[RMDB]
RNA sequence: GGGAACGACUCGAGUAGAGUCGAAAACAAGGUGACGGUGAAGAACCCCGACACCUCCAGGGUGUAUCGCGAUGUGGCGCUCACGGUCACGAUGCCGGCAGGGUGGGAGCUCAUCAACAGGAGGCUCUAUUAUCGUUCAUUUCGAUGAACGAUAAUAAAAAGAAACAACAACAACAAC
Reactivity to 2A3 in 0.01 (KOAc 150mM, MgCl2 10mM, bicine 150mM(pH8.5), 24C), signal-to-noise 6, nucleotides 027 to 126: c030a030a030g080g000u010g020a020c060g040g030u050g060a190a140g070a130a120c000c010c000c010g020a000c000a020c000c010u010c030c060a120g070g000g000u070g020u040a060u110c030g000c050g080a120u120g060u110g110g000c050g000c060u040c020a040c030g040g000u030c010a020c050g020a040u100g040c030c010g040g000c060a040g050g000g030u090g010g030g010a030g000c020u020c040a110u040c030a050a090c010a040g070g030a020g050g000c010u010c000
Reactivity to DMS in 0.01 (KOAc 150mM, MgCl2 10mM, bicine 150mM(pH8.5), 24C), signal-to-noise 9, nucleotides 027 to 126: c110a110a080g010g010u000g010a070c020g000g020u000g010a100a100g010a120a150c080c040c010c020g000a080c030a020c010c010u000c090c210a110g000g000g010u000g010u010a040u000c050g020c120g000a080u000g020u010g010g010c190g000c110u000c030a040c040g010g010u000c030a030c040g000a090u010g010c040c060g000g010c070a070g000g000g010u010g000g000g000a070g010c040u000c040a070u000c090a060a090c140a090g010g010a080g010g010c040u000c060